Chemical mapping of a 177-nucleotide RNA with 2A3 and DMS. The data come from the RNA Mapping Database (RMDB), libraries RFM100 and RFMREP.
[RMDB]
RNA sequence: GGGAACGACUCGAGUAGAGUCGAAAAAUAGGAGUAGAGUCUUUUGGUAAGAUGCUGAUAAUGAGUAGGGGAGAUGAAAGUUAAUCGUUCCCUGUCUCUCCGCUGGAAAGAAUUGCAAAACAAAGAAUACCUGUAUCAACUUCGGUUGAUACAGGUAAAAAGAAACAACAACAACAAC
Reactivity to 2A3 in 0.01 (KOAc 150mM, MgCl2 10mM, bicine 150mM(pH8.5), 24C), signal-to-noise 4, nucleotides 027 to 126: a000u050a020g040g000a020g040u140a020g070a020g080u110c030u010u150u090u070g120g000u070a120a000g060a130u040g030c030u020g060a150u090a210a090u130g060a020g030u150a300g000g000g000g040a010g010a000u100g080a080a060a030g110u190u210a070a070u050c000g000u000u010c000c010c000u000g000u020c000u000c000u000c020c010g020c000u020g010g110a100a070a060g040a080a070u080u040g000c030a020a000a030a060c030a010a060a030g020a040a060
Reactivity to DMS in 0.01 (KOAc 150mM, MgCl2 10mM, bicine 150mM(pH8.5), 24C), signal-to-noise 4, nucleotides 027 to 126: a040u030a050g010g000a120g010u020a050g000a120g020u030c010u010u010u020u020g030g000u010a040a080g010a120u000g010c040u020g000a060u020a080a080u000g010a030g020u020a090g030g000g000g000a000g010a030u000g010a080a060a130g020u030u020a080a100u020c010g000u000u000c020c000c000u000g000u000c000u000c000u000c010c000g010c070u000g030g000a040a080a070g010a060a080u030u030g000c110a030a050a050a050c110a020a110a120g000a100a060